Chemical mapping of a 177-nucleotide RNA with DMS and 2A3. The 2A3 profile rests on 513 reads. The RNA was probed in 150 mM KOAc, 10 mM MgCl2 and 150 mM bicine (pH 8.5) at 24 C. Source: RMDB library RFM100, as collected in RNAgym. DMS adducts were read by reverse transcription with MarathonRT.
RNA sequence: GGGAACGACUCGAGUAGAGUCGAAAAGACCGAAAGCGGCACAGCCCAAACCGAACAUCCGGGGGUAACUCCGGAUGGAUGUGGUGUUGUAGGACCCUGCCUAAUGCCGUGGAACGAAGCCGAAGUGUUCAAAAAUUCGGUUCGCCGAAUUUUUGAAAAAAGAAACAACAACAACAAC
Reactivity to DMS in 0.01 (KOAc 150mM, MgCl2 10mM, bicine 150mM(pH8.5), 24C), signal-to-noise 1, nucleotides 027 to 126: g000a120c040c020g000a040a160a080g000c020g000g000c020a070c110a130g020c000c000c040a050a150a080c000c010g000a160a180c000a010u000c000c000g000g010g010g020g010u060a070a140c000u000c010c000g000g000a010u000g000g000a020u000g060u120g000g000u000g000u010u000g010u000a080g000g000a160c030c070c010u010g000c060c040u000a040a020u010g080c000c000g000u000g020g000a050a040c080g000a110a140g020c000c020g020a100a110g040u020g000
Reactivity to 2A3 in 0.01 (KOAc 150mM, MgCl2 10mM, bicine 150mM(pH8.5), 24C), signal-to-noise 1, nucleotides 027 to 126: g020a000c000c010g070a110a120a000g010c000g060g000c000a000c040a070g070c000c000c000a030a050a000c000c010g000a040a000c000a000u000c000c000g020g000g000g010g020u170a210a150c000u000c000c000g020g000a000u000g000g000a000u020g120u170g000g010u050g040u030u100g060u040a130g000g000a020c000c000c150u030g000c010c000u060a120a090u090g020c000c000g110u030g000g010a000a230c010g010a030a000g060c000c000g000a120a000g050u010g070
Reactivities are given for positions 27 through 126.